The record gives the reactivity of an RNA of 177 nucleotides to 2A3. Source: RMDB library OK1LIB, as collected in RNAgym. The reactions ran in a buffer of 150 mM KOAc, 10 mM MgCl2 and 150 mM bicine (pH 8.5), at 24 C. For 2A3, 388 sequencing reads were counted.
RNA sequence: GGGAACGACUCGAGUAGAGUCGAAAACGCGGGCAGAGAGGGCGGAGGCGAACGGAAGACACCAGCGAGAGCAUGACUUCUGGAAAGCUUGCUGGGGAUUCUCGGCUCGGAUUAUCGACGGAGAACGACGGUGGAGGACGUUCGCGUCCUCCACCGUAAAAGAAACAACAACAACAAC
Reactivity to 2A3 in 0.01 (KOAc 150mM, MgCl2 10mM, bicine 150mM(pH8.5), 24C), signal-to-noise 1, nucleotides 027 to 126: c060g020c100g050g000g070c130a000g030a000g000a060g300g000g000c020g000g130a140g000g070c030g040a150a000c020g000g010a000a000g000a020c000a000c150c110a000g020c010g030a000g080a020g070c000a060u130g170a150c000u130u090c010u130g080g110a020a000a000g000c000u060u020g070c020u020g000g110g000g000a100u050u000c010u000c020g010g000c150u000c000g030g030a150u110u120a050u300c050g060a020c010g100g040a160g020a060a060c100g060